This 177-nucleotide RNA was probed chemically with 2A3 and DMS.
2A3 adducts were read by reverse transcription with SuperScript II with manganese.
RNA sequence: GGGAACGACUCGAGUAGAGUCGAAAACAGUUCAAAGGGAAUGUCUGCCAUGCUUUCACUUUAGAGGCAAUAAUUGACAUAUCUGCAUAUAACGAGCGAACAGUCAAAGGCGUUCCGGCAUGGCUGCGUAUACCAACGGAUUCGUCCGUUGGUAUACAAAAGAAACAACAACAACAAC
Reactivity to 2A3 in 0.01 (KOAc 150mM, MgCl2 10mM, bicine 150mM(pH8.5), 24C), signal-to-noise 6, nucleotides 027 to 126: c040a020g060u200u190c050a070a080a050g080g020g010a070a080u060g060u030c030u060g030c030c010a060u070g010c020u100u200u090c050a100c100u120u130u170a090g030a020g060g000c020a000a060u140a120a110u050u060g010a010c010a010u200a050u040c050u170g020c060a020u170a030u060a240a100c120g020a060g030c000g020a020a010c030a130g000u000c000a030a050a000g060g010c030g010u030u000c000c000g020g000c030a010u010g020g000c010u010g020c020
Reactivity to DMS in 0.01 (KOAc 150mM, MgCl2 10mM, bicine 150mM(pH8.5), 24C), signal-to-noise 5, nucleotides 027 to 126: c050a070g000u020u010c030a030a060a110g000g000g020a040a030u040g020u000c040u010g020c120c110a080u010g000c010u000u030u010c070a150c220u030u030u030a090g020a100g010g010c070a030a070u020a080a160u030u010g000a030c060a030u020a020u010c030u020g020c030a100u030a110u040a110a100c300g000a110g030c020g000a040a040c170a050g010u010c010a020a070a050g000g000c030g000u000u000c010c020g000g000c010a150u000g000g000c020u020g000c170